RNA sequence: GGGAACGACUCGAGUAGAGUCGAAAAACAGACUUUUUCUUUUUUGACGAAAGCAAGAAGAACUGAUUUCAGUCUAUUUCGGAGCGUACGUAAGAGUGAAUGUUGUACGCUGCUUACGUGAUGACUAACUCAGCGGCAUGUUCGCAUGCCGCUGAGUAAAAGAAACAACAACAACAAC
Reactivity to 2A3 in 0.01 (KOAc 150mM, MgCl2 10mM, bicine 150mM(pH8.5), 24C), signal-to-noise 1, nucleotides 027 to 126: a010c000a030g000a070c000u000u030u050u020u050c000u000u020u090u000u040u300g120a260c100g110a100a000a000g020c210a000a000g020a070a000g060a000a030c010u010g000a040u000u100u100c060a070g080u000c000u020a000u100u300u000c050g150g000a000g000c120g000u000a000c000g000u000a070a030g060a000g040u000g020a300a140u170g040u000u030g000u000a020c000g020c000u030g090c000u000u000a000c000g030u000g040a090u090g060a090c010u100a030
Notes:
The record gives the reactivity of an RNA of 177 nucleotides to 2A3. For 2A3 the reverse transcriptase was SuperScript II with manganese.